[RMDB]
RNA sequence: GGGAACGACUCGAGUAGAGUCGAAAACAGUGCAUGGCUCACUGCAGCCUGUCUCUUGGGCUCAAGCGAUCUUCCCACCUCAGCCUCCCGGGUAGCUGGGAUUACAGGCGCAUGCCACCACACCUGGUCAAUCUGAUUCGUUCGCGAAUCAGAUUGAAAAAGAAACAACAACAACAAC
Reactivity to DMS in 0.01 (KOAc 150mM, MgCl2 10mM, bicine 150mM(pH8.5), 24C), signal-to-noise 2, nucleotides 027 to 126: c090a060g030u000g030c100a060u000g020g000c020u000c090a090c120u000g010c090a040g030c030c010u010g010u000c060u000c100u000u000g030g020g030c030u020c000a090a130g000c030g000a020u000c060u000u000c020c000c020a160c080c060u000c030a070g000c040c020u010c000c000c000g000g010g020u000a060g010c020u000g000g000g000a080u010u000a060c030a050g000g000c000g030c100a060u010g020c010c000a020c050c080a050c060a050c000c040u000g000g010
Reactivity to 2A3 in 0.01 (KOAc 150mM, MgCl2 10mM, bicine 150mM(pH8.5), 24C), signal-to-noise 2, nucleotides 027 to 126: c040a000g020u010g070c010a070u240g050g020c010u020c030a200c140u130g000c000a040g000c000c010u050g020u010c040u030c000u070u080g100g080g000c030u050c130a080a010g080c050g100a050u020c030u000u030c000c000c000a050c010c020u050c030a010g010c010c020u090c010c010c000g060g030g030u020a030g000c060u040g050g000g020a030u030u200a040c090a080g000g000c030g000c060a050u220g030c030c000a010c030c000a090c010a010c010c000u020g040g010